[RMDB]
RNA sequence: GGGAACGACUCGAGUAGAGUCGAAAAGCUCUUGCUGGCGAUGCGGAUGCUUGGAAAGCCGCUAUUGAACAGGCUACACGCAAUCGUAAUACUGUAAAGGUUGGCAACACUGUUUAUGAUGCCAAUACCGGUCAGCCAAUUAUUCAGGGACAAGGUGCUGGGAGAAGAGAUUCGUCUCUUCUCCCAGAAAAGAAACAACAACAACAAC
Reactivity to DMS in 0.01 (KOAc 150mM, MgCl2 10mM, bicine 150mM(pH8.5), 24C), signal-to-noise 2, nucleotides 027 to 156: g000c020u000c020u000u000g030c070u010g020g020c000g020a200u000g000c020g010g030a070u010g040c050u000u000g020g020a070a080a070g010c040c080g010c090u060a170u000u020g020a110a120c100a050g000g020c000u000a120c060a170c090g110c020a080a050u020c070g050u010a090a100u000a060c020u010g040u000a210a130a100g000g000u000u000g000g020c020a000a120c040a030c040u010g010u010u000u000a170u020g030a120u000g010c000c000a050a070u000a060c050c040g010g000u010c020a070g000c030c040a080a030u000u000a210u000u000c060a160g010g030g010a070c020a020a030g010g030u000g040
Structure probing data (DMS) for a 207-nucleotide construct. The reactions ran in a buffer of 150 mM KOAc, 10 mM MgCl2 and 150 mM bicine (pH 8.5), at 24 C. The data come from the RNA Mapping Database (RMDB), library OK3TST.